[RMDB]
RNA sequence: GGGAACGACUCGAGUAGAGUCGAAAAGGGGUCGACCGAUAAGCUGAAUUUCGCAUCGAUCUAUACUGAAGCCUCCACGGUAUAGGGAGCGAAAUUCAGCUUUUGACGGUCGACGGAGGCACCCAAAACUGAGCAAUUGUUCGCAAUUGCUCAGUAAGAUUGGCCAUUGAUUCGUCAAUGGCCAAUCAAAAGAAACAACAACAACAAC
Reactivity to 2A3 in 0.01 (KOAc 150mM, MgCl2 10mM, bicine 150mM(pH8.5), 24C), signal-to-noise 3, nucleotides 027 to 156: g010g040g110g050u010c010g000a010c010c000g130a300u160a300a000g000c010u000g000a010a000u000u000u000c010g010c050a090u300c100g010a000u000c000u000a000u000a000c000u020g070a080a040g020c010c010u000c010c000a000c000g000g000u000a000u000a000g000g000g000a000g000c000g000a000a000a000u000u000c010a000g000c000u000u000u010u010g030a000c010g000g000u000c000g000a000c000g000g000a000g010g010c000a010c000c000c000a030a120a010a020c000u000g010a000g000c000a000a000u020u010g030u090u160c230g000c170a000a000u000u010g070c000u000c000a000g000u000a000a000